Chemical mapping of a 207-nucleotide RNA with DMS and 2A3. In probing experiments dimethyl sulfate is read out at A N1 and C N3, which are open when not base-paired. For 2A3 the reverse transcriptase was SuperScript II with manganese.
RNA sequence: GGGAACGACUCGAGUAGAGUCGAAAAGGAGCUCGGCAUGCUCUUAAUCCUAGGUAGAGCAUGCGUUCGCUCUACCUUACCACCGGAGCGAACUGUUGAGUCGGUGGUAUCGUGACUCAACAGUUAGGGCACGAUAGGAUAUUGCUCUGACCGAGCACGUGUCCACUAUGUUCGCAUAGUGGAUGCGAAAAGAAACAACAACAACAAC
Reactivity to DMS in 0.01 (KOAc 150mM, MgCl2 10mM, bicine 150mM(pH8.5), 24C), signal-to-noise 3, nucleotides 027 to 156: g030g010a130g000c010u000c010g020g020c030a080u000g010c010u000c010u000u000a040a080u000c020c040u000a110g030g020u000a020g010a030g040c010a180u000g020c230g000u000u010c090g020c000u000c010u010a020c020c000u010u010a030c030c010a070c040c070g020g010a090g040c030g000a040a070c060u000g000u000u010g020a080g010u000c010g020g030u000g030g020u000a010u000c040g020u020g000a050c010u010c020a080a180c040a140g010u000u000a040g000g010g010c000a060c020g000a120u000a060g000g010a170u000a080u010u000g000c020u000c020u000g000a120c020c010g010a050g010c000a070
Reactivity to 2A3 in 0.01 (KOAc 150mM, MgCl2 10mM, bicine 150mM(pH8.5), 24C), signal-to-noise 8, nucleotides 027 to 156: g100g020a060g000c010u010c020g010g000c030a040u110g000c020u000c030u020u050a060a030u020c000c010u000a010g000g010u010a010g000a000g010c040a100u180g100c140g150u140u050c060g000c000u000c000u010a010c000c000u010u040a020c010c010a020c010c010g000g010a020g000c010g030a070a050c070u080g050u110u070g020a020g010u010c010g020g060u090g050g020u040a040u050c020g010u040g060a090c000u010c030a030a060c010a080g020u070u090a040g010g000g000c010a000c030g030a040u090a080g040g010a030u030a100u080u060g000c000u010c040u030g080a150c000c010g000a000g000c000a000